[RMDB]
Source: RMDB library OK3TST, as collected in RNAgym. An RNA of 207 nucleotides, treated with DMS and 2A3 and read out base by base. For 2A3, 1,703 sequencing reads were counted. Values are in units of 0.01, from 0 to 300, in steps of 10. For 2A3 the reverse transcriptase was SuperScript II with manganese. For DMS, 2,824 sequencing reads were counted. Conditions: 150 mM KOAc, 10 mM MgCl2 and 150 mM bicine (pH 8.5), 24 C.

RNA sequence: GGGAACGACUCGAGUAGAGUCGAAAAGGAUCUACGACGCGAGCUUAGGCGCACGCAGUAAUGAAACUAGCGGGAUUGCGAUCAACAGCCGCAAAAUGCAGGGCGCGGUGGCCACGUUUAACUACAUUGAUAAUCUAGCUUACGCGGUACGCUACACAGGAGUGCUUAUUUUCGAAUAAGCACUCCUAAAAGAAACAACAACAACAAC
Reactivity to DMS in 0.01 (KOAc 150mM, MgCl2 10mM, bicine 150mM(pH8.5), 24C), signal-to-noise 2, nucleotides 027 to 156: g030g000a080u000c040u000a140c030g020a020c030g030c020g020a110g020c040u010u000a100g060g050c000g010c010a070c020g010c020a080g000u000a020a190u000g030a160a040a080c100u000a090g020c000g000g020g000a160u000u020g040c040g020a060u000c060a050a100c060a170g020c020c000g040c050a050a040a110a110u000g020c000a120g040g020g010c070g020c070g000g000u000g010g020c000c030a030c020g000u000u000u000a090a090c020u000a020c030a100u000u020g020a120u000a120a070u020c020u000a050g000c000u000u000a050c060g030c010g020g000u000a040c040g000c040u000a050c060a060c200
Reactivity to 2A3 in 0.01 (KOAc 150mM, MgCl2 10mM, bicine 150mM(pH8.5), 24C), signal-to-noise 3, nucleotides 027 to 156: g050g010a080u010c000u030a000c020g160a030c040g090c030g040a090g020c000u030u130a080g040g010c010g000c030a000c020g000c010a000g020u120a090a190u180g140a080a140a070c030u030a060g020c020g000g000g090a110u080u190g010c020g060a090u060c040a020a020c000a020g050c030c030g000c010a040a040a030a000u090g010c010a010g010g060g000c040g000c010g030g040u060g020g000c010c010a030c040g010u000u050u040a060a040c030u110a040c040a060u100u060g030a060u160a220a060u100c020u070a040g020c010u090u030a020c050g000c000g060g010u050a030c040g000c040u000a040c230a020c040